[RMDB]
Source information: Conditions: 150 mM KOAc, 10 mM MgCl2 and 150 mM bicine (pH 8.5), 24 C. Structure probing data (2A3 and DMS) for a 177-nucleotide construct. For 2A3 the reverse transcriptase was SuperScript II with manganese. For DMS the reverse transcriptase was MarathonRT.
RNA sequence: GGGAACGACUCGAGUAGAGUCGAAAAUACUCAUGGGAAGUCGGCACGACUCCCGACUAACGGGGAGGUCCGCCGUCUAGCUCAUUGGUCGGAGCUGUCGUGCGGACGUUGAGUAACAGCUAGCCAACAUAGUCGGCUAUUUCGAUAGCCGACUAUGAAAAGAAACAACAACAACAAC
Reactivity to 2A3 in 0.01 (KOAc 150mM, MgCl2 10mM, bicine 150mM(pH8.5), 24C), signal-to-noise 4, nucleotides 027 to 126: u040a010c010u010c020a030u030g060g100g130a110a090g030u020c010g120g000c040a010c060g010a010c000u010c000c000c000g010a010c010u020a020a030c020g010g010g000g010a040g010g050u020c010c020g020c000c000g040u000c010u010a010g050c000u000c020a060u040u060g050g000u060c030g040g000a060g020c090u010g000u010c010g000u060g000c020g010g000a000c000g000u000u010g010a010g010u020a050a020c010a010g040c030u090a030g050c010c000a020a020
Reactivity to DMS in 0.01 (KOAc 150mM, MgCl2 10mM, bicine 150mM(pH8.5), 24C), signal-to-noise 4, nucleotides 027 to 126: u020a020c020u000c020a020u020g010g020g000a090a120g000u000c010g020g000c070a050c090g010a040c040u000c030c000c000g000a040c050u020a060a080c100g010g000g000g000a120g010g000u000c030c070g010c010c010g000u000c030u050a020g020c000u000c020a100u030u000g010g000u010c080g000g000a020g000c040u000g000u010c000g000u020g000c010g000g010a000c020g000u000u010g010a040g010u020a030a080c150a090g010c100u030a060g000c040c030a060a210